Chemical mapping of a 207-nucleotide RNA with 2A3.
Values cover nucleotides 27 to 156.

RNA sequence: GGGAACGACUCGAGUAGAGUCGAAAAACCUUUGUGAUUCAAAGCUUUGAUCAUGUGGGAACUCGGCAAAUCUUAUGGCCCAUUGGGCCAUUCAGCUGUCCACAUGGGAGCUUGGGAAUCACUCUGGUAAAGCGAAUGACCUUCGGGUCAUUCGCAAGUCAUUAAUACGCUUCGGCGUAUUAAUGACAAAAGAAACAACAACAACAAC
Reactivity to 2A3 in 0.01 (KOAc 150mM, MgCl2 10mM, bicine 150mM(pH8.5), 24C), signal-to-noise 4, nucleotides 027 to 156: a000c000c000u010u010u010g000u010g000a000u010u010c020a020a020a020g000c000u240u210u090g090a120u210c010a010u010g000u010g000g000g090a120a110c080u060c120g020g000c020a090a110a290u110c110u240u230a020u030g000g010c010c020c100a290u090u300g020g000g000c000c000a000u050u030c030a030g000c020u010g030u040c010c000a000c000a000u010g000g000g010a010g000c000u030u010g100g260g020a000a000u010c000a000c000u000c010u000g020g010u110a190a090a000g000c000g000a000a000u000g000a000c010c030u050u090c300g090g010g000u000c000a000u000u000c000g000c000a000a000